[RMDB]
RNA sequence: GGGAACGACUCGAGUAGAGUCGAAAACUCAGUACUCUUACUCUUUCCUAUAAAGAGGAGACUGCUGGACUCGCCGCCCAAGCCCGAGCAUGGGCCCCAGUUCCGAACGAAGAGACCGCCGGGGAAGCACGUAUGCAGUUCGCUGCAUACAAAAGAAACAACAACAACAAC
Reactivity to 2A3 in 0.01 (KOAc 150mM, MgCl2 10mM, bicine 150mM(pH8.5), 24C), signal-to-noise 9, nucleotides 027 to 129: c020u020c020a010g030u050a060c020u010c020u060u080a300c010u050c010u040u100u040c050c070u170a130u220a250a060a010g020a010g010g010a010g010a010c020u020g020c020u010g010g010a040c020u030c110g040c020c010g010c000c000c000a020a020g020c000c010c020g040a040g040c080a070u100g000g020g000c000c000c000c010a040g020u110u030c020c010g010a040a030c020g010a020a040g030a010g020a050c010c030g000c010c000g010g010g000g000a010a010g040c050a010c110
Reactivity to DMS in 0.01 (KOAc 150mM, MgCl2 10mM, bicine 150mM(pH8.5), 24C), signal-to-noise 9, nucleotides 027 to 129: c090u000c020a010g050u050a040c100u010c040u010u050a210c040u030c030u010u010u000c130c120u070a120u080a110a070a030g030a040g040g000a040g000a010c060u010g050c060u000g010g000a060c040u000c130g000c030c040g000c040c020c040a050a090g020c030c010c040g000a080g010c130a070u060g040g000g000c030c010c050c000a060g020u030u030c020c050g000a030a050c040g000a060a040g000a010g010a080c110c090g020c010c050g000g010g020g010a050a030g020c110a040c150